[RMDB]
This 207-nucleotide RNA was probed chemically with 2A3. Values are in units of 0.01, from 0 to 300, in steps of 10. The reactions ran in a buffer of 150 mM KOAc, 10 mM MgCl2 and 150 mM bicine (pH 8.5), at 24 C. 2A3 adducts were read by reverse transcription with SuperScript II with manganese. Values cover nucleotides 27 to 156.

RNA sequence: GGGAACGACUCGAGUAGAGUCGAAAAAGAGUACCUGUAACCCAAUUACAAAAUCCAAACGUCACGAUGAUGUAUUGUAAUACAUAUAUAAAGAUCAUCGCACCUGAGACAGGUAGAACUGCGCUAUAAUAUGGUUUUUAUAACCCAUACCCAAUGGCCAAGUCGACUAUUUCGAUAGUCGACUUGGAAAAGAAACAACAACAACAAC
Reactivity to 2A3 in 0.01 (KOAc 150mM, MgCl2 10mM, bicine 150mM(pH8.5), 24C), signal-to-noise 1, nucleotides 027 to 156: a000g080a000g080u050a070c000c000u000g020u080a010a030c000c000c010a070a100u190u150a040c100a070a080a030a010u010c060c030a160a140a050c060g060u030c050a020c090g050a010u000g010a000u000g000u040a010u050u130g030u110a110a050u090a170c020a050u210a000u040a000u030a150a000a050g110a000u000c000a000u020c000g040c020a050c000c040u050g010a090g000a070c040a020g030g000u000a030g020a070a030c010u040g030c030g000c050u110a020u050a300a100u070a070u140g040g030u160u000u000u000u000a080u060a110a090c000c010c010a020u030a050c000c000c000a030a100u050g050g000